[RMDB]
RNA sequence: GGGAACGACUCGAGUAGAGUCGAAAAUCUGUGGUUUGACUCCGUUAAUAAUUGCAGACUUAACCCCAACGGAUGCUCUAGCAAUUUUUCUCUGGUUACCUGCUAGUUAAGAUUUAACCAGAGCAUCCCACUAUCCGGGAUAAUGGAUAGUCCCAGCCAGGAAACUGUACUUCGGUACAGUUUCCUGAAAAGAAACAACAACAACAAC
Reactivity to 2A3 in 0.01 (KOAc 150mM, MgCl2 10mM, bicine 150mM(pH8.5), 24C), signal-to-noise 1, nucleotides 027 to 156: u060c000u000g020u030g010g010u000u020u020g020a030c020u000c000c000g000u010u010a010a000u010a030a010u090u030g010c020a010g020a150c090u100u110a080a140c010c080c020c060a020a000c040g000g000a000u020g000c010u010c000u010a000g000c000a050a170u030u090u080u190u030c000u010c000u000g000g000u030u010a080c050c030u000g000c010u010a020g010u070u020a050a040g030a150u170u130u060a010a000c000c000a010g000a000g000c000a060u000c010c010c010a120c030u000a010u000c010c010g000g030g010a090u150a090a020u180g000g000a000u000a010g020u030c010c010c000a010g080c060